[RMDB]
RNA sequence: GGGAACGACUCGAGUAGAGUCGAAAAGAUGAUGCACUAUCAACUGUUGCAAUGGAAGCGCCAGUUGGCGUUGAUGUCUAUAUCUGUGAUCUUUGCCCUGAUGAGUUCAAUUGGAUCGAAACAGAACUUACUGCGGUUGCUGACCGUGCUGAAACGGCGCAAUAAAAUUGUUCGCAAUUUUAUUGCGAAAAGAAACAACAACAACAAC
Reactivity to DMS in 0.01 (KOAc 150mM, MgCl2 10mM, bicine 150mM(pH8.5), 24C), signal-to-noise 3, nucleotides 027 to 156: g000a090u000g030a090u000g020c050a080c050u030a130u010c040a040a080c050u000g010u000u000g020c010a210a230u000g050g000a110a100g000c000g030c020c000a090g040u000u000g030g010c110g040u000u000g020a080u000g020u000c050u000a100u000a070u010c040u000g020u000g000a070u000c020u000u000u010g000c020c020c010u000g000a140u010g010a090g000u000u000c020a090a200u000u010g030g030a090u000c060g000a170a070a090c040a100g000a060a060c050u000u000a070c080u000g020c040g010g040u000u000g010c020u000g030a130c020c020g000u010g040c060u010g000a070a170a110c020g000g040
Reactivity to 2A3 in 0.01 (KOAc 150mM, MgCl2 10mM, bicine 150mM(pH8.5), 24C), signal-to-noise 5, nucleotides 027 to 156: g080a020u160g020a030u060g030c040a020c080u060a050u120c040a070a060c020u060g040u110u070g020c040a070a070u100g050g100a100a040g000c030g000c030c020a090g100u120u060g070g000c020g010u030u020g030a060u050g060u000c060u070a060u010a060u120c050u050g070u050g080a070u010c040u050u070u100g030c000c020c000u070g040a150u050g020a020g060u040u040c050a070a100u130u130g080g020a070u140c090g060a110a030a020c040a080g030a020a020c040u060u070a030c020u080g040c030g000g030u040u040g000c030u030g020a040c000c010g020u020g040c090u190g030a110a110a020c030g000g010
An RNA of 207 nucleotides, treated with DMS and 2A3 and read out base by base. For 2A3, 3,392 sequencing reads were counted.